RNA sequence: GGGAACGACUCGAGUAGAGUCGAAAAAGCGUAGCGGUACGCCGCUACGCAGGGCGCAUUUGAACUGUAUUGUACGCCUUGCAUAAAGCAAAAGUACUAAAAAAACGUGCCGUUACGACGGCACGAAAAAACAUCCAUUGGUUCGCCAAUGGAUGAAGUUUCGAACUUUGUUCGCAAAGUUCGAAACAAAAGAAACAACAACAACAAC
Reactivity to 2A3 in 0.01 (KOAc 150mM, MgCl2 10mM, bicine 150mM(pH8.5), 24C), signal-to-noise 2, nucleotides 027 to 156: a000g030c000g010u000a000g000c010g020g000u020a020c220g030c000c000g000c010u000a000c000g000c000a000g000g000g010c030g030c050a090u090u080u260g160a170a070c070u070g050u210a130u140u110g040u060a010c000g000c000c000u010u000g000c040a090u170a300a120a050g000c020a010a010a010a010g020u040a020c070u180a030a070a020a070a040a010a010c010g010u000g000c000c000g000u000u020a030c270g000a000c000g110g000c000a050c000g010a040a000a000a000a000a000c000a000u030c000c000a000u000u020g040g020u030u040c100g020c070c000a000a000u000g000g000a000u000g000a000a020